Chemical mapping of a 177-nucleotide RNA with DMS and 2A3.
RNA sequence: GGGAACGACUCGAGUAGAGUCGAAAAUUUUAAGUUGAAAUCAAUUACUUCAAACUACAAAAUAUAGGAUUAGUCUGUCCAUUUUUAUUCAUCAGUUUAUACUUUAUUUGUCAUUUUCCUAUGGCAAUUGUAUAGUUAUAUUCGUAUAACUAUACAAAAAAGAAACAACAACAACAAC
Reactivity to DMS in 0.01 (KOAc 150mM, MgCl2 10mM, bicine 150mM(pH8.5), 24C), signal-to-noise 3, nucleotides 027 to 126: u020u010u040u020a030a050g020u010u000g010a050a070a080u040c110a100a080u020u030a090c040u010u020c040a020a070a040c040u010a090c100a060a030a070a050u030a060u020a130g010g000a080u020u000a050g020u040c040u010g020u010c020c010a080u030u010u030u010u010a050u040u010c040a050u020c060a050g010u010u000u020a030u020a220c040u010u010u000a040u020u000u000g030u000c000a010u010u020u010u000c040c020u000a180u000g010g000c030a030a050
Reactivity to 2A3 in 0.01 (KOAc 150mM, MgCl2 10mM, bicine 150mM(pH8.5), 24C), signal-to-noise 5, nucleotides 027 to 126: u080u090u020u030a050a010g010u000u000g050a050a040a040u080c030a050a110u230u060a070c000u040u040c030a040a140a060c020u140a070c070a040a170a080a030u220a050u140a120g020g010a020u070u050a050g080u050c100u070g050u040c020c010a040u000u080u050u130u140a120u100u130c040a080u030c040a040g030u020u130u100a060u030a050c030u020u090u080a150u070u030u040g000u000c000a000u080u070u080u050c010c020u040a010u010g000g000c000a010a050

The data come from the RNA Mapping Database (RMDB), libraries RFM100 and RFMREP. For DMS the reverse transcriptase was MarathonRT.